[RMDB]
RNA sequence: GGGAACGACUCGAGUAGAGUCGAAAACAGCGUCGUGGUCUUGAAGUCGAUCACCUGCGGCUGAUCGACUUCGAAGACGAUGGUGCCGGCUGGCCAGCGCAGCCGGUAGGCGCGGGAAUCCAGGCCGCACGGUGAUGAGGUUCGCCUCAUCACCGUGAAAAGAAACAACAACAACAAC
Reactivity to DMS in 0.01 (KOAc 150mM, MgCl2 10mM, bicine 150mM(pH8.5), 24C), signal-to-noise 2, nucleotides 027 to 126: c060a100g010c000g030u000c050g060u000g010g000u010c010u000u000g010a030a020g010u000c000g010a000u000c000a030c100c060u000g020c110g030g020c190u000g000a030u000c010g000a030c010u020u010c000g010a020a030g020a020c010g010a040u000g010g030u000g030c000c000g010g000c010u000g010g010c010c030a130g010c100g010c020a020g010c010c000g000g020u010a030g010g010c020g020c020g000g010g000a110a130u030c020c040a070g000g000c030c060g010
Reactivity to 2A3 in 0.01 (KOAc 150mM, MgCl2 10mM, bicine 150mM(pH8.5), 24C), signal-to-noise 1, nucleotides 027 to 126: c010a000g010c010g050u080c010g060u050g160g060u010c040u020u030g010a010a010g030u000c010g000a000u000c010a010c030c010u300g060c100g080g000c090u000g000a000u020c010g000a000c000u020u010c020g000a020a000g010a000c000g000a080u060g040g120u030g020c000c010g000g000c030u070g030g090c050c090a200g010c070g010c080a040g000c030c000g000g010u030a070g000g010c000g010c050g020g030g000a030a070u010c020c000a040g120g060c050c010g000
Conditions: 150 mM KOAc, 10 mM MgCl2 and 150 mM bicine (pH 8.5), 24 C.
This 177-nucleotide RNA was probed chemically with DMS and 2A3.
DMS adducts were read by reverse transcription with MarathonRT.
For 2A3, 1,407 sequencing reads were counted.